This 207-nucleotide RNA was probed chemically with 2A3 and DMS. High 2A3 reactivity points to a flexible backbone, as in loops and unpaired stretches. Conditions: 150 mM KOAc, 10 mM MgCl2 and 150 mM bicine (pH 8.5), 24 C. It was measured as part of the RMDB library OK3TST. Values cover nucleotides 27 to 156.
RNA sequence: GGGAACGACUCGAGUAGAGUCGAAAAGGUAUCUAAUCAGCAUGAGUAAAUAACCAGCUCUAAGGAGGAUGUGAUAUACCACCCAGUGUGGGGACUGCUGGGUAUGGCAGUGGUUCCUACACUGAAUCAUGCUCUGGAGUCACUUGGAGGCUUAUUACUAUGACCUGAGUUUCGACUCAGGUCAUAGAAAAGAAACAACAACAACAAC
Reactivity to 2A3 in 0.01 (KOAc 150mM, MgCl2 10mM, bicine 150mM(pH8.5), 24C), signal-to-noise 2, nucleotides 027 to 156: g000g020u040a040u060c070u100a070a090u040c020a030g060c000a050u050g030a080g090u170a050a090a090u100a080a150c070c040a040g040c000u030c020u040a010a190g080g010a010g000g010a050u040g040u060g100a090u060a000u030a130c050c020a010c000c000c010a000g010u010g000u000g000g010g000g000a000c000u010g010c000u010g090g060g060u170a150u150g120g040c000a000g010u000g000g010u000u010c000c000u010a010c000a000c000u000g000a020a040u040c020a010u030g050c000u030c010u060g040g030a070g020u050c010a050c120u010u050g060g000a020g030g000c030u090u040a060u040u100a160
Reactivity to DMS in 0.01 (KOAc 150mM, MgCl2 10mM, bicine 150mM(pH8.5), 24C), signal-to-noise 1, nucleotides 027 to 156: g030g000u000a050u010c050u010a110a080u000c030a080g030c030a060u000g000a100g000u010a030a050a170u010a050a140c060c030a120g010c050u010c010u000a040a120g000g000a050g000g020a090u000g010u000g010a130u000a140u000a100c030c010a120c010c020c030a060g010u010g010u000g010g000g010g000a010c030u000g000c000u000g020g060g000u000a060u000g010g000c020a020g020u000g040g000u000u000c020c010u000a020c000a000c000u000g000a020a040u000c010a030u010g000c010u000c030u000g020g000a060g010u010c020a050c120u010u000g010g000a110g020g000c060u000u000a030u000u010a150